[RMDB]
RNA sequence: GGGAACGACUCGAGUAGAGUCGAAAACAGUAUACCGCCACUUGUGUGAGAAUACUUUUUGUACAAGCGAGUACACGCAGUAUACUGCCACUUGUGAGAGAAUACUUUUAGUACAAGCGAGUACACGCCUGACUGGGCUAUUCGUAGCCCAGUCAGGAAAAGAAACAACAACAACAAC
Reactivity to 2A3 in 0.01 (KOAc 150mM, MgCl2 10mM, bicine 150mM(pH8.5), 24C), signal-to-noise 2, nucleotides 027 to 126: c020a030g020u010a000u030a010c000c000g000c000c020a040c030u090u070g000u020g000u040g070a040g110a170a000u090a110c020u000u080u110u050u140g010u000a000c010a110a020g040c040g100a060g010u030a010c040a000c100g040c010a000g000u000a000u000a090c020u040g110c000c000a080c020u050u130g020u120g020a060g000a040g010a160a010u080a090c000u060u070u090u280a170g020u010a000c000a020a030g000c020g050a000g010u040a030c050a000c010g050
Reactivity to DMS in 0.01 (KOAc 150mM, MgCl2 10mM, bicine 150mM(pH8.5), 24C), signal-to-noise 1, nucleotides 027 to 126: c020a010g000u000a080u000a040c250c160g000c030c010a000c180u000u150g080u030g000u000g000a150g000a030a000u000a040c040u000u000u000u000u000g000u000a000c000a070a270g000c030g000a300g040u000a000c030a030c000g000c300a050g000u000a000u000a000c000u000g000c110c070a000c180u010u000g000u000g000a000g020a040g000a250a250u000a000c000u000u000u000u020a080g020u000a070c070a120a160g000c120g000a300g070u000a020c110a050c300g000
Structure probing data (2A3 and DMS) for a 177-nucleotide construct.
For 2A3, 1,103 sequencing reads were counted.
2A3 is a SHAPE reagent: it acylates the 2'-hydroxyl of flexible nucleotides of all four kinds.
For 2A3 the reverse transcriptase was SuperScript II with manganese.
Values are in units of 0.01, from 0 to 300, in steps of 10.
Conditions: 150 mM KOAc, 10 mM MgCl2 and 150 mM bicine (pH 8.5), 24 C.
It was measured as part of the RMDB library OK1LIB.